[RMDB]
RNA sequence: GGGAACGACUCGAGUAGAGUCGAAAAAGACAUACGUUCGCGUAUGUCUGACGGGCACCUGACCCUAAGGAAAUGCUGUAUGACAGGACACACUGAUUGUGAUACCUCGAGAUUUCGAUCUCGAGAAGCACUUACAACACUUCGGUGUUGUAAGUGCAAAAGAAACAACAACAACAAC
Reactivity to DMS in 0.01 (KOAc 150mM, MgCl2 10mM, bicine 150mM(pH8.5), 24C), signal-to-noise 2, nucleotides 027 to 126: a000g010a020c010a010u010a010c000g040u000u010c170g040c000g030u000a000u010g010u010c000u010g000a060c170g010g000g010c060a060c020c020u020g000a170c030c010c000u010a080a090g010g010a090a050a110u000g010c030u000g000u000a060u010g010a090c020a010g000g030a190c050a100c040a040c070u000g020a100u000u000g000u000g000a190u000a090c160c000u000c000g000a020g010a000u000u000u000c140g000a020u010c000u000c000g000a010g000a060a110
Reactivity to 2A3 in 0.01 (KOAc 150mM, MgCl2 10mM, bicine 150mM(pH8.5), 24C), signal-to-noise 2, nucleotides 027 to 126: a000g000a000c000a000u010a020c000g010u010u080c250g000c010g110u000a000u000g000u000c000u000g010a010c000g000g050g000c010a060c040c010u060g130a200c030c000c000u050a050a040g160g090a100a060a020u120g050c020u060g060u150a110u120g070a030c010a050g030g040a040c000a000c000a010c080u150g080a220u140u120g050u070g020a060u070a060c010c010u010c000g010a040g000a010u050u050u100c200g080a070u000c000u000c000g000a000g010a020a000

An RNA of 177 nucleotides, treated with DMS and 2A3 and read out base by base. For 2A3, 1,531 sequencing reads were counted. Values cover nucleotides 27 to 126. Source: RMDB library M2PK50, as collected in RNAgym. 2A3 adducts were read by reverse transcription with SuperScript II with manganese. For DMS the reverse transcriptase was MarathonRT. The reactions ran in a buffer of 150 mM KOAc, 10 mM MgCl2 and 150 mM bicine (pH 8.5), at 24 C.